RNA sequence: GGGAACGACUCGAGUAGAGUCGAAAAACAUUAUGACCUUCGGGUCAUAAUGUCAUUUUACCUUUGUGUACCCUUUCAACAGCGAUGAGCCCAUUGGGCUCGCGACAUGAAAGGUACACUCUGGUUCGUUAAGGCCCGCAAUUCGUUGCGGGCCUAAUGAAAGUGUGAAGUUCGCUUCACACUUUCAAAAAGAAACAACAACAACAAC
Reactivity to DMS in 0.01 (KOAc 150mM, MgCl2 10mM, bicine 150mM(pH8.5), 24C), signal-to-noise 2, nucleotides 027 to 156: a010c000a000u010u000a020u000g010a000c000c000u010u030c300g050g020g040u000c000a000u000a010a000u000g010u010c010a070u000u000u010u030a090c010c000u010u000u000g010u000g000u010a000c050c020c030u000u000u000c020a040a180c150a300g000c000g030a110u010g020a030g020c010c000c000a300u010u020g100g030g000c000u010c010g020c010g000a100c080a300u000g010a010a010a020g010g010u000a000c010a010c000u000c060u000g020g000u000u010c120g020u000u000a090a090g020g040c000c010c000g020c000a030a070u000u000c270g010u010u010g010c000g000g010g010c000c000u000a000a030